[RMDB]
RNA sequence: GGGAACGACUCGAGUAGAGUCGAAAAGUACACCCUCCCUCCCUCCCAAAAGCGCGCAAAUAAAGGGAGGGACUCAGGGAUGAGUAGGGCAAAAGGCCAUAUCCCGAAGACGCGCGACGGGACAAAACACACCAACACUAUUCGUAGUGUUGGUGUGAAAAGAAACAACAACAACAAC
Reactivity to DMS in 0.01 (KOAc 150mM, MgCl2 10mM, bicine 150mM(pH8.5), 24C), signal-to-noise 2, nucleotides 027 to 126: g000u010a130c140a090c020c010c010u000c020c010c000u000c010c000c010u000c000c000c050a050a080a110a150g020c000g000c010g050c110a040a120a130u000a100a080a110g000g000g000a000g000g020g000a030c060u000c180a040g010g000g000a100u020g000a010g030u000a010g000g020g020c050a050a030a030a160g010g010c040c020a070u000a130u000c000c010c000g000a100a170g000a140c070g000c010g000c010g010a170c030g010g000g010a040c140a040a070a130a070
Reactivity to 2A3 in 0.01 (KOAc 150mM, MgCl2 10mM, bicine 150mM(pH8.5), 24C), signal-to-noise 1, nucleotides 027 to 126: g020u050a070c030a120c070c000c000u050c010c000c000u000c030c000c000u080c020c010c020a030a120a030a020g000c040g000c000g020c050a030a080a150u190a070a140a010g020g000g000a010g000g000g000a000c000u020c010a000g040g000g010a000u050g010a000g070u210a110g000g000g000c040a190a210a200a050g290g010c050c020a040u030a060u150c020c000c000g000a020a040g030a010c040g010c000g010c010g000a000c000g000g020g000a000c050a000a100a050a010